The record gives the reactivity of an RNA of 177 nucleotides to DMS and 2A3.
Source: RMDB library OK1LIB, as collected in RNAgym.
Conditions: 150 mM KOAc, 10 mM MgCl2 and 150 mM bicine (pH 8.5), 24 C.
For 2A3 the reverse transcriptase was SuperScript II with manganese.
DMS adducts were read by reverse transcription with MarathonRT.
RNA sequence: GGGAACGACUCGAGUAGAGUCGAAAAGAAAGAAAUCAAAGCGGAUUGAUCUACGAAUAACUCGUAGUUCACUAAUCGGAGAGUGAUCCAAUAUCCGUAUUAGAUGUAACUGAGCGUUGAGUAGAAAGGGAAACAUAGAGUUCGCUCUAUGUUUCCCAAAAGAAACAACAACAACAAC
Reactivity to DMS in 0.01 (KOAc 150mM, MgCl2 10mM, bicine 150mM(pH8.5), 24C), signal-to-noise 2, nucleotides 027 to 126: g010a130a080a040g000a040a050a020u010c030a020a200a170g000c040g000g040a080u000u010g020a080u000c010u010a000c000g000a070a190u050a110a130c150u000c010g000u000a010g010u010u000c000a030c130u020a050a050u020c040g000g000a060g010a110g030u040g000a040u020c070c080a040a100u010a040u000c030c020g000u020a020u010u030a060g010a060u030g000u000a070a080c090u000g000a080g000c070g000u000u050g000a110g000u000a060g000a080a050a130
Reactivity to 2A3 in 0.01 (KOAc 150mM, MgCl2 10mM, bicine 150mM(pH8.5), 24C), signal-to-noise 4, nucleotides 027 to 126: g080a020a020a010g090a020a050a000u060c030a060a070a020g070c050g080g030a000u010u150g010a010u020c000u000a000c000g060a120a130u160a200a100c020u000c000g000u000a000g000u000u020c020a020c020u100a050a080u130c100g030g000a030g010a000g090u120g060a080u020c030c000a000a010u050a010u070c010c000g020u070a020u020u020a030g020a060u070g030u200a060a030c040u070g020a010g090c060g020u000u030g010a010g050u100a020g030a020a090a020